Conditions: 150 mM KOAc, 10 mM MgCl2 and 150 mM bicine (pH 8.5), 24 C. Structure probing data (2A3) for a 177-nucleotide construct.
RNA sequence: GGGAACGACUCGAGUAGAGUCGAAAAGGCGUGCUUUACCAAGUCAUGGUUUAGUGCGAAGCCCUCUUGACAAUGCAGUCCUUUACAGAAAUAUCCAAUGUAUAGGCUGUUAGGCUGACUGAUAUGAGUCGCCACAGUUCUUCGGAACUGUGGCGACAAAAGAAACAACAACAACAAC
Reactivity to 2A3 in 0.01 (KOAc 150mM, MgCl2 10mM, bicine 150mM(pH8.5), 24C), signal-to-noise 1, nucleotides 027 to 126: g030g120c000g000u000g040c000u000u000u000a000c000c000a200a100g200u120c110a300u140g000g000u000u000u000a000g000u000g040c040g000a000a010g180c000c000c000u030c110u000u040g030a010c050a090a050u040g000c000a000g000u300c000c000u010u020u000a030c000a000g090a010a080a000u190a120u140c270c210a200a230u180g050u000a000u140a000g220g000c000u000g010u010u040a010g050g000c000u060g000a000c000u010g000a010u000a120u300g000a050

For 2A3 the reverse transcriptase was SuperScript II with manganese.